[RMDB]
RNA sequence: GGGAACGACUCGAGUAGAGUCGAAAAGAAGCACUGGCACGUUUCCGCGAUGUUGUGAUGAAGGUGAAAAGAUCGCUCUUAAUUAGAUUAAAAACAUUUUUUUCUUCCUCUGUAAUUUUGCCUUGAAGUACAAUAAGCAGUUCGCUGCUUAUUGUACAAAAGAAACAACAACAACAAC
Reactivity to DMS in 0.01 (KOAc 150mM, MgCl2 10mM, bicine 150mM(pH8.5), 24C), signal-to-noise 1, nucleotides 027 to 126: g000a110a090g030c020a080c070u000g000g080c020a090c040g000u010u000u000c030c030g020c020g040a040u010g000u000u020g030u010g070a100u010g010a080a030g060g000u000g010a050a040a040a060g000a060u000c030g020c030u000c070u000u000a030a080u030u010a080g010a300u010u020a020a050a050a050a060c020a040u000u000u000u000u000u000u000c020u010u000c010c020u000c030u000g020u010a040a070u000u000u000u000g010c040c000u020u010g000a120a090